[RMDB]
RNA sequence: GGGAACGACUCGAGUAGAGUCGAAAACUCUCACUAUCAAAAGCAAAUUCCAAGUAGUGAGCACAAUGGAACUUGUUAGUAGGAGGCAGCACCUGCCAUCGUACCAUCUCAGCUCCAGUUGGCUGAGCUGGCUAUAUGGGUUCGCCCAUAUAGCCAGAAAAGAAACAACAACAACAAC
Reactivity to DMS in 0.01 (KOAc 150mM, MgCl2 10mM, bicine 150mM(pH8.5), 24C), signal-to-noise 2, nucleotides 027 to 126: c100u000c000u000c040a080c060u010a010u010c120a070a090a110a150g000c100a030a050a070u010u000c040c040a090a250g000u000a040g000u010g030a060g000c200a080c100a080a080u010g010g000a050a050c070u000u010g010u000u000a030g000u020a060g000g010a070g010g010c080a030g010c140a080c090c040u000g000c030c020a030u000c080g010u010a100c020c030a080u010c010u010c020a010g020c020u010c030c080a090g000u000u030g010g020c020u000g000a020g000
Reactivity to 2A3 in 0.01 (KOAc 150mM, MgCl2 10mM, bicine 150mM(pH8.5), 24C), signal-to-noise 1, nucleotides 027 to 126: c020u030c000u000c010a020c050u050a100u270c080a090a060a040a050g060c010a020a030a160u060u040c050c010a000a080g010u040a020g020u070g090a030g050c050a030c030a040a060u100g020g020a000a070c030u020u050g040u160u080a060g070u020a020g010g090a000g010g000c020a020g000c040a040c130c020u050g050c000c020a130u020c020g100u050a050c020c020a080u020c000u010c020a000g010c000u000c030c010a120g020u150u040g060g000c010u000g000a000g030
The record gives the reactivity of an RNA of 177 nucleotides to DMS and 2A3. DMS adducts were read by reverse transcription with MarathonRT. 2A3 adducts were read by reverse transcription with SuperScript II with manganese. The reactions ran in a buffer of 150 mM KOAc, 10 mM MgCl2 and 150 mM bicine (pH 8.5), at 24 C.